[RMDB]
RNA sequence: GGGAACGACUCGAGUAGAGUCGAAAAAUGCCCUCGGGUAUGCAGCUGUAACUUUUAGAGACACGCAAAUUCGUUUGCAAAGAUCAUGGGAUGCUACAAUGUGGAGAGGAUAUUCAACGCCUAAAGUUCGUUCCCGUCUAUCGCAAGACACCAGUUAGAUCUUUAUUUAGUUCGCUAAAUAAAGAUCAAAAGAAACAACAACAACAAC
Reactivity to 2A3 in 0.01 (KOAc 150mM, MgCl2 10mM, bicine 150mM(pH8.5), 24C), signal-to-noise 6, nucleotides 027 to 156: a000u080g050c010c000c000u020c040g060g010g010u050a040u090g000c030a030g010c040u030g050u120a090a110c050u050u100u060u160a100g040a010g020a080c030a030c090g010c030a030a060a080u140u110c140g050u040u050u030g010c010a040a050a050g030a060u060c020a040u090g040g030g030a030u040g010c010u020a030c030a060a110u100g030u070g060g010a050g000a000g040g010a020u030a040u100u110c070a060a030c050g040c020c010u110a120a100a010g010u050u050c000g000u000u000c000c020c000g000u000c000u040a110u130c070g010c110a050a010g030a030c020a030c070c010a010g020u060u070a020
Reactivity to DMS in 0.01 (KOAc 150mM, MgCl2 10mM, bicine 150mM(pH8.5), 24C), signal-to-noise 3, nucleotides 027 to 156: a100u000g000c020c010c000u000c070g020g030g020u010a070u010g030c040a050g060c060u000g010u000a040a110c050u000u000u010u000a060g010a110g020a080c040a150c160g030c020a010a040a140u000u000c140g010u000u000u000g030c020a080a100a070g020a130u000c030a080u000g010g000g020a060u000g020c010u000a040c050a020a090u000g020u010g020g020a210g020a110g010g010a080u000a110u000u010c030a030a090c040g020c020c030u000a070a040a030g000u000u000c010g020u000u000c000c000c010g010u000c090u000a090u010c090g000c070a050a120g010a090c020a030c070c030a080g010u000u000a150